[RMDB]
RNA sequence: GGGAACGACUCGAGUAGAGUCGAAAAAUCGCUGUUCGCAGCGAUAAAAAAGCGUACUACGGAUUGCAGGUGGGAGGAUGCGUCCCAAAUAGGACGCAAUCCGAGGAUCACCUGAACUACAAUCCGUAUCGCAAAAAGGUGGCGUUCGCGCCACCAAGACUAAAAUGACGUUCGCGUCAUUUUAGUCAAAAGAAACAACAACAACAAC
Reactivity to DMS in 0.01 (KOAc 150mM, MgCl2 10mM, bicine 150mM(pH8.5), 24C), signal-to-noise 1, nucleotides 027 to 156: a010u000c000g020c000u010g020u010u000c280g010c020a060g050c000g010a030u010a000a110a050a210a040a140g020c000g030u010a030c090u000a030c000g010g000a020u000u010g000c000a080g020g010u010g000g020g000a110g040g060a100u010g010c020g020u000c000c000c000a030a100a160u000a030g000g030a060c030g000c010a040a000u000c010c000g010a030g030g000a170u000c010a040c010c000u000g000a010a100c040u030a220c010a010a020u000c000c000g010u000a000u000c000g000c010a080a090a120a130a130g000g010u000g000g010c030g080u020u010c020g030c050g000c000c010a030c000c030a000a220
Reactivity to 2A3 in 0.01 (KOAc 150mM, MgCl2 10mM, bicine 150mM(pH8.5), 24C), signal-to-noise 3, nucleotides 027 to 156: a000u000c010g000c000u020g050u080u090c300g010c100a010g010c010g000a020u150a010a080a010a000a000a000g020c010g010u070a050c010u000a000c010g000g000a000u000u000g010c000a000g000g010u000g000g000g000a010g000g000a000u000g000c000g000u010c000c000c010a060a170a020u160a030g020g000a000c000g020c020a040a190u000c000c000g040a090g000g000a000u000c000a000c020c010u000g000a000a020c030u090a040c030a000a000u000c000c000g000u000a010u020c000g000c010a060a080a020a020a040g020g010u010g020g000c030g000u020u070c230g030c010g000c140c000a000c000c000a000a000